[RMDB]
RNA sequence: GGGAACGACUCGAGUAGAGUCGAAAAGAUAUGGAAUGUAGCUCAUUUUGGCGUUGAAAUCGGAAACGAUGGAGCCAUUUGAGCAAUACAUUCCUAAGUCAAACUUAGGACGUUCGCGUCCUAAGAAGACAUCCUCAUACUUCGGUAUGAGGAUGUCAAAAGAAACAACAACAACAAC
Reactivity to DMS in 0.01 (KOAc 150mM, MgCl2 10mM, bicine 150mM(pH8.5), 24C), signal-to-noise 2, nucleotides 027 to 126: g000a080u000a300u020g010g000a000a010u000g020u000a090g000c000u000c000a010u000u000u000u000g020g040c000g020u000u020g000a080a160a010u000c000g030g000a080a130a170c020g010a010u000g000g030a140g000c000c000a020u010u000u000g010a010g000c040a060a050u000a010c010a010u000u000c020c000u010a010a060g000u000c040a070a110a180c000u000u000a000g000g020a000c000g010u000u010c190g020c040g020u000c000c000u000a000a000g000a060a120
Reactivity to 2A3 in 0.01 (KOAc 150mM, MgCl2 10mM, bicine 150mM(pH8.5), 24C), signal-to-noise 2, nucleotides 027 to 126: g020a020u090a050u160g020g020a020a000u010g010u030a090g260c000u010c020a050u060u100u080u150g000g000c060g120u260u070g020a030a030a000u010c010g000g000a090a070a030c000g000a010u020g040g010a000g000c000c000a000u020u000u000g000a000g000c000a000a000u020a010c000a000u000u000c000c000u030a120a000g050u010c080a120a050a050c020u010u010a000g000g000a010c000g040u060u050c300g020c000g140u000c000c000u000a000a000g020a010a000